[RMDB]
RNA sequence: GGGAACGACUCGAGUAGAGUCGAAAACGCAAAGCUGCAGCGCGGCGCUCUUGAGGCCUUGCCCCGCGCACUGCUCUUUACAUGGCCCGACGUGAGGGCACUUCGCGGGCAGUGCUGCGGCCUCGUGAAACUGCCCCUAAGUUCGCUUAGGGGCAAAUACUGGUGUCGAAUUCGUUCGACACCAGUAAAAAGAAACAACAACAACAAC
Reactivity to 2A3 in 0.01 (KOAc 150mM, MgCl2 10mM, bicine 150mM(pH8.5), 24C), signal-to-noise 2, nucleotides 027 to 156: c000g050c020a120a060a010g030c030u110g030c030a060g050c020g000c010g090g000c020g040c020u040c010u110u120g040a090g000g010c000c020u070u120g070c050c000c000c010g000c010g020c000a030c000u000g010c000u000c010u080u140u190a110c040a110u170g050g000c010c030c060g060a130c010g090u090g060a160g000g000g020c040a050c010u040u050c020g010c070g020g030g000c000a020g010u000g000c000u060g000c000g000g000c000c000u000c020g010u000g030a080a060a010c080u030g010c010c010c010c010u010a010a010g060u030u110c080g080c170u000u010a010g000g030g010g030c000a000a000a000
The record gives the reactivity of an RNA of 207 nucleotides to 2A3. For 2A3 the reverse transcriptase was SuperScript II with manganese. The data come from the RNA Mapping Database (RMDB), library M2RFOK.